An RNA of 177 nucleotides, treated with DMS and read out base by base. For DMS the reverse transcriptase was MarathonRT.

[RMDB]
RNA sequence: GGGAACGACUCGAGUAGAGUCGAAAAAAAAGCUAUUAAUGUUUUGAGAAAAUUCAGGAAAGAGAUUGAAAGGAUGCUGAAUAUCUUGAAUAGGAGACGCAGAUCUGCAGGCAUGAUCAUUAUGCUGAUAUAGGAAAAUCUUCGGAUUUUCCUAUAUAAAAGAAACAACAACAACAAC
Reactivity to DMS in 0.01 (KOAc 150mM, MgCl2 10mM, bicine 150mM(pH8.5), 24C), signal-to-noise 2, nucleotides 027 to 126: a060a060a090a060g010c010u010a140u010u010a080a090u000g000u020u000u000u000g010a120g000a050a080a060a030u000u000c010a020g020g020a090a060a110g020a050g000a080u010u010g000a080a050a120g030g010a090u000g000c050u000g000a070a030u010a080u000c000u010u000g010a050a060u010a090g000g000a080g010a060c270g020c070a060g010a060u000c040u000g020c100a100g010g010c040a010u000g020a050u010c100a050u010u000a020u010g020c040u000g010